[RMDB]
The record gives the reactivity of an RNA of 207 nucleotides to DMS and 2A3.

RNA sequence: GGGAACGACUCGAGUAGAGUCGAAAAAUAAAGGGCCUAGGGACCUCAGUGUCCAGUGGAGGAAACCAGAUGUCGACAGUCAAUUAAGCCCCUUUCAGGCGAGUUUCAACUUACCCUGGUCUAACAAUAAUAUCUAACACUGACUGCAGGGGUUAUACGAUUACUCAUAUUUCGAUAUGAGUAAUCGAAAAGAAACAACAACAACAAC
Reactivity to DMS in 0.01 (KOAc 150mM, MgCl2 10mM, bicine 150mM(pH8.5), 24C), signal-to-noise 2, nucleotides 027 to 156: a100u000a070a110a090g030g000g030c040c020u000a060g000g030g000a040c020c020u000c080a080g020u000g010u000c030c000a090g000u000g010g010a100g000g000a100a050a070c040c040a080g020a080u010g010u000c100g020a050c070a070g010u010c060a070a100u010u000a070a190g010c030c030c030c020u000u000u000c050a070g010g040c020g010a070g030u000u000u000c100a080a060c070u000u000a100c050c000c020u000g030g070u000c050u000a060a100c080a110a160u010a080a130u000a120u000c060u000a060a130c060a090c050u000g000a060c060u000g010c100a050g040g030g010g040u000u030a060u010a170
Reactivity to 2A3 in 0.01 (KOAc 150mM, MgCl2 10mM, bicine 150mM(pH8.5), 24C), signal-to-noise 2, nucleotides 027 to 156: a020u160a010a080a030g000g000g040c010c040u040a050g050g020g010a010c010c020u070c060a140g020u090g020u160c030c030a040g080u040g070g020a080g010g000a100a050a010c040c010a030g020a130u120g080u070c040g030a020c030a020g010u030c010a030a050u080u100a070a010g010c000c000c010c000u020u170u080c070a020g040g000c040g030a040g000u020u080u110c100a120a060c010u100u080a060c000c000c000u010g040g000u030c020u070a020a010c060a040a040u130a120a060u070a070u130c040u040a110a030c050a040c110u060g070a010c010u050g020c030a030g010g000g000g020u040u040a030u090a090
The reactions ran in a buffer of 150 mM KOAc, 10 mM MgCl2 and 150 mM bicine (pH 8.5), at 24 C. For 2A3, 1,151 sequencing reads were counted. DMS adducts were read by reverse transcription with MarathonRT. The data come from the RNA Mapping Database (RMDB), library OK3TST.